[RMDB]
RNA sequence: GGGAACGACUCGAGUAGAGUCGAAAAAGGUACAUGAUCAGUACGUACCAGUACGAUCAUGCAUGUCUAGCACUAGCAUGAUCGUACCUAGAUACAUGUCAUGACGUAGUCUAGGUCUAGACUACUAAUCCGUGCUUGGAUUCGUCCAAGCACGGAUAAAAGAAACAACAACAACAAC
Reactivity to 2A3 in 0.01 (KOAc 150mM, MgCl2 10mM, bicine 150mM(pH8.5), 24C), signal-to-noise 2, nucleotides 027 to 126: a010g160g030u110a070c010a000u080g020a090u160c080a020g080u080a060c110g010u030a060c040c000a000g000u000a000c000g000a000u000c000a000u000g010c000a030u070g010u010c120u210a090g010c170a030c030u040a030g000c000a000u000g000a000u000c000g000u000a000c000c000u020a050g010a060u050a050c060a080u070g050u050c020a040u020g080a030c060g010u000a000g000u000c010u010a040g130g090u030c090u030a010g000a010c020u040a000c000u060a080
Reactivity to DMS in 0.01 (KOAc 150mM, MgCl2 10mM, bicine 150mM(pH8.5), 24C), signal-to-noise 3, nucleotides 027 to 126: a090g010g010u000a130c030a000u000g000a040u000c070a140g040u010a030c130g010u000a070c030c060a230g000u000a000c000g000a000u010c000a000u000g010c000a240u010g000u000c010u000a140g030c180a030c020u010a300g000c010a000u000g000a030u000c000g020u000a000c030c080u000a030g000a110u000a020c080a100u000g010u000c030a010u000g000a100c150g020u000a010g010u000c010u000a010g030g010u010c180u000a030g020a000c000u000a010c000u010a050